[RMDB]
RNA sequence: GGGAACGACUCGAGUAGAGUCGAAAAAAUGUACUAGCAUACUGCAACAAUCUUUAUCUUACGAAAGAAGAACUAGGUUUUGACCACAACGACCUAGAGCAAUUGAGGUGUGAAAUGGUUAGACUCAGAGGCCUUUUAAGCAGUGAACAAAAAGAACGUAAAGAGUCGUAUUCGUACGACUCUUUACAAAAGAAACAACAACAACAAC
Reactivity to DMS in 0.01 (KOAc 150mM, MgCl2 10mM, bicine 150mM(pH8.5), 24C), signal-to-noise 1, nucleotides 027 to 156: a100a050u000g010u010a070c030u000a100g040c010a120u000a090c050u010g040c030a060a080c050a060a110u000c060u020u010u000a050u030c000u010u010a290c090g010a030a130a100g000a120a160g030a080a240c000u000a060g010g030u000u000u000u000g050a260c040c020a040c090a090a210c120g000a000c000c030u010a070g000a110g030c160a020a190u000u030g020a110g000g010u000g010u000g010a070a060a140u000g000g020u000u000a100g050a040c020u000c020a150g020a150g000g000c000c000u060u000u000u000a010a210g020c000a070g060u000g000a060a100c000a040a000a110a060a040g010a070a060c180
Reactivity to 2A3 in 0.01 (KOAc 150mM, MgCl2 10mM, bicine 150mM(pH8.5), 24C), signal-to-noise 2, nucleotides 027 to 156: a000a040u180g000u090a070c040u020a020g070c020a030u010a130c000u060g020c000a030a040c040a080a060u030c040u010u170u070a140u100c050u020u170a120c100g050a090a050a050g050a060a000g040a040a040c000u010a000g030g000u010u020u070u090g090a080c030c000a020c040a090a020c080g050a000c000c020u010a000g010a020g070c020a020a070u060u110g040a010g070g000u030g020u010g080a050a080a070u060g000g020u030u030a030g010a030c010u010c080a030g010a090g070g030c010c020u030u100u000u010a040a020g040c030a020g010u030g080a050a040c080a020a020a000a070a150g040a060a010c030